[RMDB]
RNA sequence: GGGAACGACUCGAGUAGAGUCGAAAAGCAGAGAACUCUCAGAAGCCAGUUCAGCACGUGAAGGGCAGGCAGCACCCACGACUGCCCAGCGGGGCCGUGGAGCCAGCAUGGCUAAGUCCUGCCGUCUGUGUCCCUGCAGAGCUGAUGCAGACAGAGACCUAGCCAGUAUAUUCGUAUACUGGCUAGGAAAAGAAACAACAACAACAAC
Reactivity to 2A3 in 0.01 (KOAc 150mM, MgCl2 10mM, bicine 150mM(pH8.5), 24C), signal-to-noise 1, nucleotides 027 to 156: g090c050a000g040a020g010a230a040c030u050c000u000c050a020g050a000a040g020c050c010a000g000u050u020c040a000g000c030a010c130g100u230g030a060a020g010g040g000c010a030g020g000c000a000g040c000a020c000c010c000a000c010g090a070c110u200g010c000c020c020a010g040c050g110g040g000g000c000c000g000u000g000g020a030g010c020c040a060g110c110a290u280g000g000c000u020a070a040g040u050c000c000u010g000c070c000g000u000c010u020g080u000g040u010c050c030c000u010g000c010a000g030a000g060c040u000g010a040u100g020c000a030g010a060c050a000g100a030g040a010
Reactivity to DMS in 0.01 (KOAc 150mM, MgCl2 10mM, bicine 150mM(pH8.5), 24C), signal-to-noise 1, nucleotides 027 to 156: g010c040a110g000a230g060a070a060c000u010c030u000c020a130g050a070a250g010c100c030a050g000u000u000c000a130g060c040a080c020g010u000g000a000a120g000g030g030c050a030g050g030c000a100g020c050a120c100c000c030a050c020g000a030c050u010g050c000c000c100a110g000c190g010g010g050g010c030c060g010u010g000g010a150g010c000c040a210g010c060a050u000g010g040c000u010a030a060g000u000c010c010u000g030c000c010g020u010c000u000g020u000g010u010c030c040c010u050g000c020a070g000a050g000c030u000g020a000u000g010c000a100g010a120c030a060g040a130g050a210